[RMDB]
RNA sequence: GGGAACGACUCGAGUAGAGUCGAAAAGCUAAGGCAACUAGACUGAAAGGAUUUCAUUUAACCCUCAAUGUAAAACCAGGUUAUAUAAUUGUAGGUAGAUAGGGGAAUUUGGCAGAGAGAUAAUCGUGUACAAUUAUUUGUUCUUUUCCUAUUAUUAGUACUACUGCUCGUUCGCGAGCAGUAGUACAAAAGAAACAACAACAACAAC
Reactivity to 2A3 in 0.01 (KOAc 150mM, MgCl2 10mM, bicine 150mM(pH8.5), 24C), signal-to-noise 1, nucleotides 027 to 156: g030c030u010a040a000g020g020c010a030a060c050u010a010g010a010c010u100g110a050a090a200g030g000a030u020u040u060c040a070u050u230u300a160a120c080c010c050u110c040a160a160u150g000u140a020a030a030a040c000c000a020g100g030u190u000a010u000a010u000a010a050u010u130g010u040a000g020g000u000a030g010a090u160a090g050g000g000g030a020a030u140u060u080g020g000c010a000g000a000g010a000g000a010u040a060a020u050c060g070u020g010u090a000c010a030a020u000u060a050u080u150u030g030u070u100c000u000u000u020u070c020c020u070a120u300u110a120u150u220a210